Structure probing data (DMS and 2A3) for a 207-nucleotide construct.
For DMS, 4,011 sequencing reads were counted.
The reactions ran in a buffer of 150 mM KOAc, 10 mM MgCl2 and 150 mM bicine (pH 8.5), at 24 C.

[RMDB]
RNA sequence: GGGAACGACUCGAGUAGAGUCGAAAAGGCUCUCGGUGACAUUUAGGAAGAAAUGUGAAAUGGUAGAAACAAUUUAGAAGACAAUUUAGCAAUUUCAUAAAAUGUCAGACACAUACUUACCAUGUGACCCAGAUGUCCUAUUUAGAGAGACAAGAAAUAAUAAUCGUCCUUUCGAGGACGAUUAUUAAAAAGAAACAACAACAACAAC
Reactivity to DMS in 0.01 (KOAc 150mM, MgCl2 10mM, bicine 150mM(pH8.5), 24C), signal-to-noise 3, nucleotides 027 to 156: g010g000c000u000c010u000c030g030g010u000g020a040c020a010u010u000u000a090g010g030a140a220g000a050a100a090u010g010u000g000a080a060a060u000g000g020u000a050g010a130a100a130c060a080a150u000u010u000a190g020a200a130g010a120c020a050a160u010u010u000a090g020c020a050a140u000u000u010c040a080u000a030a060a050a090u000g020u010c040a090g010a240c090a140c060a070u000a070c110u000u000a100c070c050a060u000g000u010g010a180c020c010c000a080g010a050u000g000u000c010c060u000a170u000u000u010a100g000a080g020a030g000a060c040a070a080g010a080a030a140
Reactivity to 2A3 in 0.01 (KOAc 150mM, MgCl2 10mM, bicine 150mM(pH8.5), 24C), signal-to-noise 3, nucleotides 027 to 156: g020g020c010u000c010u000c020g030g030u080g090a000c000a000u080u090u190a050g040g000a040a030g020a050a170a080u080g030u000g020a100a020a180u100g040g000u050a070g110a050a120a020c020a020a030u110u150u220a110g030a090a020g010a030c020a050a090u020u030u070a010g000c020a020a260u010u100u090c050a030u080a060a070a020a030u060g050u040c010a000g070a090c030a000c000a020u060a060c010u040u030a090c020c000a000u020g010u040g060a030c010c000c000a000g000a040u050g060u070c000c000u020a080u040u160u060a040g010a010g010a000g000a010c030a080a030g080a080a100a000